[RMDB]
This 177-nucleotide RNA was probed chemically with DMS and 2A3. The reactions ran in a buffer of 150 mM KOAc, 10 mM MgCl2 and 150 mM bicine (pH 8.5), at 24 C. The 2A3 profile rests on 772 reads. For 2A3 the reverse transcriptase was SuperScript II with manganese. 2A3 is a SHAPE reagent: it acylates the 2'-hydroxyl of flexible nucleotides of all four kinds. DMS adducts were read by reverse transcription with MarathonRT.

RNA sequence: GGGAACGACUCGAGUAGAGUCGAAAAUUUACGUGAGAUCGGGAUGGUUAUUGACUGUUGGUCAUGCAUUCUUCCAGAUGCCAGAUGGUGCAGUAUUUACAAUCAUCCAUCAGCAUUCUGCAAUACCCUCGUCUCUCUCAUUCGUGAGAGAGACGAGAAAAGAAACAACAACAACAAC
Reactivity to DMS in 0.01 (KOAc 150mM, MgCl2 10mM, bicine 150mM(pH8.5), 24C), signal-to-noise 2, nucleotides 027 to 126: u000u010u010a070c130g010u000g020a040g000a120u010c130g010g020g010a050u000g000g000u000u010a100u050u000g030a040c010u000g020u000u010g050g000u000c010a080u000g000c090a030u010u000c070u000u020c190c060a040g000a060u000g020c020c110a110g030a000u000g020g030u000g010c180a230g000u000a110u010u000u010a050c110a120a070u000c040a140u000c010c000a050u000c050a210g000c020a040u000u000c000u000g000c180a040a040u030a120c120c060
Reactivity to 2A3 in 0.01 (KOAc 150mM, MgCl2 10mM, bicine 150mM(pH8.5), 24C), signal-to-noise 1, nucleotides 027 to 126: u060u020u100a080c000g000u070g040a100g000a100u190c080g080g060g020a030u050g040g010u030u090a080u040u180g050a020c000u020g070u160u060g100g000u020c000a030u020g030c030a000u070u060c000u110u040c030c000a040g000a020u000g070c010c010a070g000a020u060g060g040u060g040c020a010g020u190a180u060u190u110a030c060a030a050u020c000a000u070c000c000a020u020c000a000g030c000a040u150u050c010u000g000c000a000a070u050a140c040c040